Structure probing data (2A3 and DMS) for a 177-nucleotide construct. Conditions: 150 mM KOAc, 10 mM MgCl2 and 150 mM bicine (pH 8.5), 24 C. For DMS, 648 sequencing reads were counted. For 2A3 the reverse transcriptase was SuperScript II with manganese. Values are in units of 0.01, from 0 to 300, in steps of 10. The data come from the RNA Mapping Database (RMDB), library TTRDEL.

[RMDB]
RNA sequence: GGGAACGACUCGAGUAGAGUCGAAAAGAUAUGGACUUACGAUGAAGGGGAGAUUGGGUGUCGGAAACGACAUAGAUCGAAGAACUGGAGUAAGUCCUAAGUCAAAACUACCUGUUCGCAGGUAGAACGACUUAGCAGGGUUCGCCCUGCUAAGUCGAAAAGAAACAACAACAACAAC
Reactivity to 2A3 in 0.01 (KOAc 150mM, MgCl2 10mM, bicine 150mM(pH8.5), 24C), signal-to-noise 1, nucleotides 027 to 126: g000a000u020a080u170g000g000a000c020u000u000a010c010g300a300u020g060a130a010g000g000g010g060a060g070a070u010u080g300g230g100u000g000u010c000g020g080a110a030a050c050g010a000c000a010u000a030g010a020u020c000g000a100a050g020a010a010c000u020g000g050a000g010u000a010a030g000u000c000c000u000a010a000g030u020c040a000a040a070a160c000u010a010c000c010u000g010u060u040c300g000c070a000g000g030u000a000g000a030a030
Reactivity to DMS in 0.01 (KOAc 150mM, MgCl2 10mM, bicine 150mM(pH8.5), 24C), signal-to-noise 1, nucleotides 027 to 126: g000a030u000a300u000g020g000a010c000u000u000a000c010g000a210u000g000a110a150g000g000g000g030a030g050a050u000u000g020g030g030u010g070u000c000g000g000a090a080a220c020g070a030c010a020u000a280g000a020u000c000g000a090a080g030a070a230c020u000g000g010a080g030u000a020a000g000u000c000c000u010a000a070g010u030c030a040a110a050a150c000u000a000c030c000u000g000u020u010c170g010c000a000g060g000u000a010g000a040a140